[RMDB]
RNA sequence: GGGAACGACUCGAGUAGAGUCGAAAAGUAGUUAUGCUGAAAAUCGUUGAGGUUGUAUGGAAUAGGUUAACCGUACGACCUUAAGUUGAAAAACUUUAAAAUUAAUCUCAGGUAAAUUACUUUGAGUAAAACCUUCGUCGUUUCGACGACGAAGGAACUCUACCACAAUCUUCGGAUUGUGGUAGAGAAAAGAAACAACAACAACAAC
Reactivity to 2A3 in 0.01 (KOAc 150mM, MgCl2 10mM, bicine 150mM(pH8.5), 24C), signal-to-noise 2, nucleotides 027 to 156: g000u010a010g000u030u010a140u240g090c010u100g010a010a000a060a090u100c110g110u020u100g030a010g030g030u010u020g010u000a010u030g020g000a090a120u080a200g100g210u110u130a050a000c000c000g020u000a000c000g010a010c000c000u000u000a000a010g000u010u020g010a130a080a000a000a000c040u180u250u250a130a290a060a060u060u100a100a190u040c010u000c120a000g000g060u170a180a000a000u030u000a000c000u020u070u150g080a050g080u100a060a040a030a040c000c000u010u000c000g000u000c000g010u050u070u100c100g090a050c000g020a000c010g000a000a000g000g000a000a000
The record gives the reactivity of an RNA of 207 nucleotides to 2A3. It was measured as part of the RMDB library M2RFPK. Conditions: 150 mM KOAc, 10 mM MgCl2 and 150 mM bicine (pH 8.5), 24 C. The 2A3 profile rests on 771 reads.